[RMDB]
Annotation:
This 177-nucleotide RNA was probed chemically with 2A3. The 2A3 profile rests on 901 reads. It was measured as part of the RMDB library RFM100.

RNA sequence: GGGAACGACUCGAGUAGAGUCGAAAAUGACAGCUGCACGCCCGGAGCCAAGCGCGGCGUGGGCUGAAGCCCGGCGGCGGGUACGCCAACGCCGCGAGGACAUGCUGCGCCAUCCUGCAUUUCUGUCAGGAUGACGUGACUUCGGUCACGUCAUCCUAAAAGAAACAACAACAACAAC
Reactivity to 2A3 in 0.01 (KOAc 150mM, MgCl2 10mM, bicine 150mM(pH8.5), 24C), signal-to-noise 1, nucleotides 027 to 126: u120g030a040c070a030g000c020u010g040c020a010c130g000c000c010c000g080g000a020g000c010c000a170a000g020c000g010c010g040g000c000g010u030g020g000g000c010u010g020a060a030g000c000c000c000g020g030c060g030g100c000g040g020g020u040a080c070g000c010c000a010a000c000g000c000c000g000c020g000a050g000g010a010c010a080u060g000c000u050g050c030g000c000c000a070u100c000c000u000g080c060a050u040u040u030c040u060g120u060c020